[RMDB]
RNA sequence: GGGAACGACUCGAGUAGAGUCGAAAAUAGCUGCGCAUAAGACCGAAGUAGUCCUGCUGAGCAGCAGAAAGUCCGUUGAGUGCAUGCGUGUAGAAGUCAAAGGAGUUGAAAUCGCCUCAGCAGAAACGGUCCUGCGUGGAUUCGUCCACGCAGGACCAAAAGAAACAACAACAACAAC
Reactivity to 2A3 in 0.01 (KOAc 150mM, MgCl2 10mM, bicine 150mM(pH8.5), 24C), signal-to-noise 1, nucleotides 027 to 126: u220a000g000c030u050g050c040g070c030a030u230a170a000g130a170c010c000g020a070a140g080u220a000g050u030c000c000u000g000c000u010g010a000g090c070a000g010c000a000g060a150a010a000g010u000c000c000g060u020u020g010a000g000u090g000c050a050u070g050c220g000u050g010u000a110g150a190a030g040u000c060a000a000a110g000g030a130g030u070u030g240a000a140a000u000c000g000c000c000u000c060a000g000c000a000g120a030a020a000c000
Description:
Conditions: 150 mM KOAc, 10 mM MgCl2 and 150 mM bicine (pH 8.5), 24 C. An RNA of 177 nucleotides, treated with 2A3 and read out base by base.